[RMDB]
RNA sequence: GGGAACGACUCGAGUAGAGUCGAAAAGGGAAGACAGUGAGUGGACGGAAUAAAUCCCCUUCCCACCUCCCCACUGUCCACUCACUGUCUUCCGAGAAGGAAAUAUAAAUCGGGGGUGGGAAGGGGAAUAUCACCUCGCAUUCGUGCGAGGUGAUAUAAAAGAAACAACAACAACAAC
Reactivity to 2A3 in 0.01 (KOAc 150mM, MgCl2 10mM, bicine 150mM(pH8.5), 24C), signal-to-noise 1, nucleotides 027 to 126: g090g000g000a020a020g010a000c030a000g050u000g000a000g020u000g000g000a010c040g010g060a070a080u130a120a080a050u070c000c040c000c000u020u000c010c000c010a000c000c000u020c120c110c000c010a050c060u000g040u000c000c000a000c000u000c000a000c000u000g030u000c000u000u000c000c010g000a000g070a010a000g130g020a020a100a020u220a040u100a050a100a040u220c070g000g000g010g000g040u000g000g000g000a000a000g000g000g000g000a000
An RNA of 177 nucleotides, treated with 2A3 and read out base by base. Reactivities are given for positions 27 through 126. For 2A3 the reverse transcriptase was SuperScript II with manganese. The reactions ran in a buffer of 150 mM KOAc, 10 mM MgCl2 and 150 mM bicine (pH 8.5), at 24 C. The 2A3 profile rests on 948 reads.